[RMDB]
This 177-nucleotide RNA was probed chemically with 2A3 and DMS.
For DMS, 986 sequencing reads were counted.
Source: RMDB library TTRDES, as collected in RNAgym.
The reactions ran in a buffer of 150 mM KOAc, 10 mM MgCl2 and 150 mM bicine (pH 8.5), at 24 C.
RNA sequence: GGGAACGACUCGAGUAGAGUCGAAAAGAUAUGGAGAAUGCCAGGACAUGACGUGCAGUCGGAAACGACUGUAAACGUCAACAGCCUGCAUUCUCCUAAGUCAAAGGAUAUGUCUUCGGACAUAUCCGCAUCUCUGUGGCUUCGGCCACAGAGAUGCAAAAGAAACAACAACAACAAC
Reactivity to 2A3 in 0.01 (KOAc 150mM, MgCl2 10mM, bicine 150mM(pH8.5), 24C), signal-to-noise 2, nucleotides 027 to 126: g000a000u030a010u170g030g000a020g020a060a010u080g110c260c160a050g000g000a030c210a300u300g010a000c030g000u000g000c010a020g030u100c000g040g000a010a000a000c010g070a000c000u000g000u000a130a280a000c000g030u030c010a020a060c040a020g000c000c000u000g000c030a000u020u010c000u000c000c000u000a000a010g000u010c000a060a140a210g010g000a010u020a000u050g000u020c010u080u210c300g080g020a000c010a000u000a000u020c000c020
Reactivity to DMS in 0.01 (KOAc 150mM, MgCl2 10mM, bicine 150mM(pH8.5), 24C), signal-to-noise 1, nucleotides 027 to 126: g000a010u020a060u020g030g000a020g020a020a010u000g010c250c090a000g040g030a010c080a300u030g010a020c000g010u000g010c060a020g000u010c020g000g000a010a030a090c010g030a000c000u000g050u000a030a090a180c010g010u000c000a050a080c290a120g000c000c000u020g040c000a000u000u000c000u000c000c010u000a000a100g000u010c030a100a070a200g000g010a020u000a010u000g000u000c000u000u000c300g020g000a010c000a000u000a010u000c000c010